RNA sequence: GGGAACGACUCGAGUAGAGUCGAAAACUUUCUGAAUCGCCCAUUUAUGAAGGGGGAGGGACUUAGGGUAGGUCCCUCUGAGUAGGCAGUUUAUAAAUUUUUAUUUGGAAACACAUGUUAUAAAUCUCAGUGGGUUUUACUUUAGGGCUCAGCAGGAGUAUUAUAAUGGUUUCGACCAUUAUAAUACAAAAGAAACAACAACAACAAC
Reactivity to 2A3 in 0.01 (KOAc 150mM, MgCl2 10mM, bicine 150mM(pH8.5), 24C), signal-to-noise 1, nucleotides 027 to 156: c030u040u110u100c000u080g050a090a100u070c020g040c020c040c010a030u070u230u130a140u220g070a080a100g010g000g000g000g030a020g030g000g020a000c010u050u080a000g010g050g000u070a050g040g000u100c020c050c020u000c030u000g000a000g000u020a010g020g000c030a000g020u000u020u080a070u090a050a100a090u210u230u090u120u170a070u020u030u070g080g020a030a090a000c040a000c000a010u050g020u040u090a100u160a140a160a290u030c000u000c000a000g000u020g000g000g030u000u040u020u030a000c000u000u050u050a030g040g000g020c050u020c100a020g020c010a000g050g000a010